Background
The record gives the reactivity of an RNA of 177 nucleotides to DMS and 2A3. For 2A3 the reverse transcriptase was SuperScript II with manganese. The RNA was probed in 150 mM KOAc, 10 mM MgCl2 and 150 mM bicine (pH 8.5) at 24 C.
[RMDB]
RNA sequence: GGGAACGACUCGAGUAGAGUCGAAAAGAUAUGGAUCCUUCUUGCUGGCGAAGAACGUACUUCGGAAACGAAGUACGGGAGCCAUCAAGAGAGGAUCCUAAGUCAAACCGAAAGUUCGCUUUCGGAAUCCUCACAUAUGGUUCGCCAUAUGUGAGGAAAAAGAAACAACAACAACAAC
Reactivity to DMS in 0.01 (KOAc 150mM, MgCl2 10mM, bicine 150mM(pH8.5), 24C), signal-to-noise 3, nucleotides 027 to 126: g000a030u000a300u010g030g000a020u000c010c010u010u010c000u000u000g000c100u020g010g010c020g000a150a210g000a150a170c020g000u000a020c000u000u020c000g000g000a160a150a220c000g030a010a010g000u000a000c000g000g000g000a090g010c010c010a000u000c010a000a000g000a080g020a010g000g000a010u000c010c000u000a020a070g000u000c050a070a120a230c020c000g000a010a010a030g000u000u030c300g010c000u000u000u010c010g010g030a110a100
Reactivity to 2A3 in 0.01 (KOAc 150mM, MgCl2 10mM, bicine 150mM(pH8.5), 24C), signal-to-noise 2, nucleotides 027 to 126: g030a030u070a040u150g010g000a010u000c000c000u000u020c000u000u040g000c030u030g000g020c020g220a300a010g060a150a040c000g000u010a000c020u010u000c010g010g050a080a090a010c010g000a000a020g010u000a010c000g000g000g000a000g000c000c000a010u010c010a000a000g100a060g120a030g010g000a000u010c000c000u000a030a020g000u000c030a070a040a090c000c020g040a000a010a000g080u160u300c300g060c300u010u010u040c000g030g090a010a150